Background:
Structure probing data (DMS and 2A3) for a 177-nucleotide construct.

RNA sequence: GGGAACGACUCGAGUAGAGUCGAAAAGCUUCUGCAGCAGCUGUGACCUCGAAGGUCUCAUUCUUGAUGCUGCAGGUAGAGGCCAGCUGGGCCUGCAGAGAGCUGCCUCCCACCCCUGCUCCUGCGACGGAGAGUAGCUGUUCGCAGCUACUCUCCGAAAAGAAACAACAACAACAAC
Reactivity to DMS in 0.01 (KOAc 150mM, MgCl2 10mM, bicine 150mM(pH8.5), 24C), signal-to-noise 1, nucleotides 027 to 126: g030c000u010u000c010u000g000c000a030g000c020a020g000c000u000g000u030g000a130c000c000u000c050g010a190a220g000g000u000c150u010c020a040u010u000c260u010u000g000a050u000g010c100u000g020c070a020g000g000u010a070g000a030g000g000c010c000a010g030c030u010g010g010g030c300c000u000g000c020a040g010a080g000a040g020c000u000g000c150c120u000c010c000c020a300c050c010c020c000u000g020c070u010c000c010u020g000c110g010a180
Reactivity to 2A3 in 0.01 (KOAc 150mM, MgCl2 10mM, bicine 150mM(pH8.5), 24C), signal-to-noise 1, nucleotides 027 to 126: g010c000u030u010c000u030g000c030a090g030c000a030g010c040u030g070u200g160a300c000c000u010c050g060a110a050g000g020u000c010u000c000a100u220u190c050u170u230g020a030u070g030c120u100g000c010a010g010g000u010a010g000a000g010g000c000c000a000g020c050u100g030g080g010c050c010u000g000c000a000g040a000g020a020g050c000u000g060c000c020u030c040c000c000a020c000c000c020c010u020g030c040u000c010c020u070g070c030g050a070
The reactions ran in a buffer of 150 mM KOAc, 10 mM MgCl2 and 150 mM bicine (pH 8.5), at 24 C. It was measured as part of the RMDB library OK2TRN. Reactivities are given for positions 27 through 126. The DMS profile rests on 1,031 reads.